About this RNA:
Chemical mapping of a 207-nucleotide RNA with 2A3. For 2A3 the reverse transcriptase was SuperScript II with manganese. The RNA was probed in 150 mM KOAc, 10 mM MgCl2 and 150 mM bicine (pH 8.5) at 24 C.
RNA sequence: GGGAACGACUCGAGUAGAGUCGAAAACGGUAUUGGUCAAGGCUAUACCGACAGCGCACCUUCAAAAGGGCGCUUAAUCCCCGGCCAAGCGCCGGAAUAUGAAUAGACACCGCUGGGCUGGUAGGGCAAAACAUGGCGAUCUUCGGAUCGCCAUGAAGAUCUGAAGCUAGUUCGCUAGCUUCAGAUCAAAAGAAACAACAACAACAAC
Reactivity to 2A3 in 0.01 (KOAc 150mM, MgCl2 10mM, bicine 150mM(pH8.5), 24C), signal-to-noise 1, nucleotides 027 to 156: c030g000g030u020a030u030u150g000g040u010c100a090a050g120g000c000u010a000u010a030c010c000g000a050c060a000g000c000g000c100a300c080c010u090u200c100a080a120a100a030g000g020g010c000g000c010u000u000a010a000u000c000c050c000c030g020g020c000c000a090a060g010c080g050c080c020g010g000a000a000u140a030u020g100a070a020u110a160g060a000c020a020c010c010g010c050u030g000g030g120c030u000g080g000u050a020g040g010g030c000a020a060a060a110c000a010u000g000g000c010g010a000u000c000u030u030c080g090g000a000u000c000g000c010c000a000u000g000a000a000